[RMDB]
RNA sequence: GGGAACGACUCGAGUAGAGUCGAAAAGCGGGAUGAAUGACACGACCCACACCACGAUGUUGAGGAAGGCCAGAAUAAUAUUGCGUAUGACUGGCGGUGCGUAAUCCGCCAAGCGCAGGUAGCCGCGACAUCAGCCUAUUUUCGAAUAGGCUGAUGUAAAAGAAACAACAACAACAAC
Reactivity to DMS in 0.01 (KOAc 150mM, MgCl2 10mM, bicine 150mM(pH8.5), 24C), signal-to-noise 6, nucleotides 027 to 126: g020c050g010g000g010a070u010g000a110a060u010g010a100c070a060c060g000a180c040c010c030a080c070a090c060c090a090c150g000a070u010g010u010u020g010a080g000g020a100a100g010g010c050c040a070g010a090a070u010a080a080u020a090u010u010g000c020g020u010a110u040g020a130c190u010g010g010c000g010g010u010g020c170g010u030a130a100u020c010c000g000c010c020a000a050g010c030g020c010a030g000g000u010a060g000c020c030g000c060g010
Reactivity to 2A3 in 0.01 (KOAc 150mM, MgCl2 10mM, bicine 150mM(pH8.5), 24C), signal-to-noise 5, nucleotides 027 to 126: g060c040g000g020g030a050u090g080a090a090u140g030a060c040a030c200g090a060c000c020c000a030c010a000c020c000a050c050g120a120u070g010u100u070g000a080g070g060a030a060g020g030c030c010a040g100a060a040u200a150a030u130a070u130u060g000c020g010u060a040u180g130a120c020u020g010g000c000g000g000u040g000c150g050u090a050a080u020c010c000g020c000c010a010a010g000c010g000c000a010g010g010u010a000g030c010c000g000c000g020

Chemical mapping of a 177-nucleotide RNA with DMS and 2A3. The reactions ran in a buffer of 150 mM KOAc, 10 mM MgCl2 and 150 mM bicine (pH 8.5), at 24 C. For 2A3 the reverse transcriptase was SuperScript II with manganese. DMS adducts were read by reverse transcription with MarathonRT.